[RMDB]
Structure probing data (2A3 and DMS) for a 177-nucleotide construct.

RNA sequence: GGGAACGACUCGAGUAGAGUCGAAAAGAUAUGGACGUGUUGCAGACAUGCUGAUACCAUCGGAAACGAUGGUAAUUAGCAACAGCUGCACCACGUCCUAAGUCAAAACAGCUCGUUCGCGAGCUGACCGUUGUCUGAAGUUCGCUUCAGACAACGGAAAAGAAACAACAACAACAAC
Reactivity to 2A3 in 0.01 (KOAc 150mM, MgCl2 10mM, bicine 150mM(pH8.5), 24C), signal-to-noise 1, nucleotides 027 to 126: g000a030u030a020u110g000g000a000c000g000u000g040u000u020g000c010a030g100a140c090a290u300g000c020u000g000a020u010a020c000c000a000u000c010g000g020a010a050a020c020g000a020u000g000g020u000a010a050u000u000a000g020c010a070a060c110a030g060c020u000g000c020a000c000c000a010c010g020u000c000c000u000a010a000g000u000c010a030a000a100a080c020a000g000c030u030c020g090u130u160c300g030c050g130a000g020c030u000g030a080
Reactivity to DMS in 0.01 (KOAc 150mM, MgCl2 10mM, bicine 150mM(pH8.5), 24C), signal-to-noise 2, nucleotides 027 to 126: g010a020u000a300u000g000g020a030c000g040u020g010u000u000g010c000a000g000a060c060a300u000g010c000u000g000a000u000a050c000c020a010u010c000g020g000a100a070a220c040g020a020u000g020g000u000a010a030u000u000a000g010c000a060a080c300a150g000c000u000g000c010a030c050c000a060c000g000u000c000c000u000a000a040g010u000c040a080a040a040a250c000a010g000c010u020c010g010u000u020c160g020c010g030a000g000c010u000g000a050